Structure probing data (2A3 and DMS) for a 177-nucleotide construct. DMS adducts were read by reverse transcription with MarathonRT. For 2A3 the reverse transcriptase was SuperScript II with manganese.
RNA sequence: GGGAACGACUCGAGUAGAGUCGAAAACAUUGACGCCGGAAAGGGUCCGUGUGGAUGAUGAUGCCGCGAAUAUCCGAUAUGCCAGCAUAAUAUCGAAUCACGGCACAAUAGCGCUCGUCUGCGUUCUACUUACGCAGCAAUUCGUUGCUGCGUAAGUAAAAGAAACAACAACAACAAC
Reactivity to 2A3 in 0.01 (KOAc 150mM, MgCl2 10mM, bicine 150mM(pH8.5), 24C), signal-to-noise 9, nucleotides 027 to 126: c010a000u020u050g030a040c050g210c140c010g090g090a200a120a090g090g000g010u000c000c020g010u010g010u010g050g030a050u050g010a030u040g040a060u030g040c000c010g020c010g040a070a040u130a090u140c080c020g020a010u010a010u030g100c090c060a060g030c040a130u090a220a010u010a130u020c010g000a010a000u010c000a010c020g000g000c010a010c000a020a160u150a060g090c060g010c020u010c020g060u020c070u110g020c010g010u020u020c000u010
Reactivity to DMS in 0.01 (KOAc 150mM, MgCl2 10mM, bicine 150mM(pH8.5), 24C), signal-to-noise 4, nucleotides 027 to 126: c040a030u010u020g000a050c030g010c020c000g020g010a050a080a110g000g010g020u000c010c050g010u010g000u000g010g000a220u020g000a040u020g010a230u000g000c010c000g010c040g000a060a080u040a120u020c090c010g000a010u010a010u000g010c090c110a140g010c140a120u030a050a020u000a030u010c000g000a080a050u000c020a030c030g010g000c020a030c110a080a120u020a080g010c110g000c030u000c020g010u000c040u010g000c020g010u010u010c010u010